An RNA of 207 nucleotides, treated with 2A3 and read out base by base. Source: RMDB library M2RFPK, as collected in RNAgym. Conditions: 150 mM KOAc, 10 mM MgCl2 and 150 mM bicine (pH 8.5), 24 C. As a SHAPE reagent, 2A3 marks flexible, mostly unpaired nucleotides at the ribose 2'-OH. For 2A3, 2,191 sequencing reads were counted. For 2A3 the reverse transcriptase was SuperScript II with manganese.
RNA sequence: GGGAACGACUCGAGUAGAGUCGAAAAGUGUAGCGUCACUUUGAUGGCGGUACUAUGAAUUGAUGCAAGGUGUGGAGCGGCCUUAAACAGUUCUGGUGGUGCUCUGAAUGGAGUGCUCUACUGAGAUUUAACUUAUGCACGUUCGCGUGCAUAAGAACUACGCAUCUUCCUUCGGGAAGAUGCGUAGAAAAGAAACAACAACAACAAC
Reactivity to 2A3 in 0.01 (KOAc 150mM, MgCl2 10mM, bicine 150mM(pH8.5), 24C), signal-to-noise 3, nucleotides 027 to 156: g060u030g010u030a020g100c030g010u040c010a030c070u120u140u300g210a290u100g020g000c000g000g060u010a010c020u020a040u160g050a040a040u090u050g060a060u070g050c040a040a000g010g010u050g010u100g010g010a010g010c020g000g000c040c000u080u090a080a100a000c010a030g010u010u030c020u030g020g030u040g010g010u040g000c010u030c000u060g180a080a080u260g010g000a000g010u020g000c000u030c020u000a070c030u070g070a030g020a180u090u200u130a090a030c000u000u000a000u000g000c000a010c010g030u010u040c200g020c030g050u010g000c000a010u000a000a000g000a010a000